Overview: Structure probing data (2A3 and DMS) for a 177-nucleotide construct. Source: RMDB library OK2TST, as collected in RNAgym. DMS adducts were read by reverse transcription with MarathonRT. The RNA was probed in 150 mM KOAc, 10 mM MgCl2 and 150 mM bicine (pH 8.5) at 24 C.
[RMDB]
RNA sequence: GGGAACGACUCGAGUAGAGUCGAAAAGUAAGGUGCCCCAGUGCUAAUUCCACUUAUACUUGCUGGUGGCAAGGACACUUCUCCUCCUUAUUAAAGUGGGGGAUUGGCUGGGUGAGGUGGCUCACGCUAUCCAACCUUAGUUCGCUAAGGUUGGAUAAAAAGAAACAACAACAACAAC
Reactivity to 2A3 in 0.01 (KOAc 150mM, MgCl2 10mM, bicine 150mM(pH8.5), 24C), signal-to-noise 3, nucleotides 027 to 126: g050u050a040a080g050g060u040g020c020c020c010c020a020g030u040g070c040u090a100a090u090u050c050c010a070c070u100u090a110u100a240c070u050u100g040c030u050g050g110u110g060g000c020a010a020g040g010a010c020a000c000u060u040c010u030c020c000u030c000c000u180u170a190u100u250a190a130a050g080u110g000g020g020g000g000a010u020u100g020g020c050u070g020g010g040u040g030a050g010g050u070g030g000c030u020c020a040c050g010c010
Reactivity to DMS in 0.01 (KOAc 150mM, MgCl2 10mM, bicine 150mM(pH8.5), 24C), signal-to-noise 4, nucleotides 027 to 126: g000u020a070a090g020g020u000g010c060c010c020c060a060g030u000g000c090u010a090a110u010u000c070c020a040c090u000u010a120u000a120c100u000u000g010c040u000g010g020u010g020g040c050a040a040g000g010a090c110a060c080u000u000c060u000c010c030u000c060c020u010u000a140u010u010a080a070a070g020u000g020g010g000g000g000a040u010u000g010g000c040u000g000g000g020u000g010a070g000g010u000g010g010c050u010c070a080c150g020c110